[RMDB]
RNA sequence: GGGAACGACUCGAGUAGAGUCGAAAACCGUAGGGCUUGGGAGCUCAAUCAUUCGUUGAAAUCAGUUUCGAAAGAGACUGAUGGAGAAUGAUGGGAGCGAGGAUCAAGCCCUAAACGGAAAGAGUAUUUGUAUUCCUUCGGGAAUACAAAUACUCAACAUGAUCCCGAACUUCGGUUCGGGAUCAUGAAAAGAAACAACAACAACAAC
Reactivity to 2A3 in 0.01 (KOAc 150mM, MgCl2 10mM, bicine 150mM(pH8.5), 24C), signal-to-noise 1, nucleotides 027 to 156: c010c000g010u000a010g020g000g020c000u000u000g040g000g000a040g010c000u020c000a010a020u010c000a010u010u010c020g230u280u040g030a020a030a000u000c000a000g000u000u000u000c050g030a120a050a060g000a010g010a000c020u000g000a000u030g000g030a020g000a010a000u000g000a000u020g050g300g000a000g000c010g120a140g010g010a010u020c000a000a000g000c010c000c000u000a000a000a000c010g130g010a030a200a080g000a000g030u000a000u000u010u010g000u010a010u000u010c020c000u040u080c300g050g000g000a000a000u000a000c000a000a000a000u000a000c000u000c000a000a000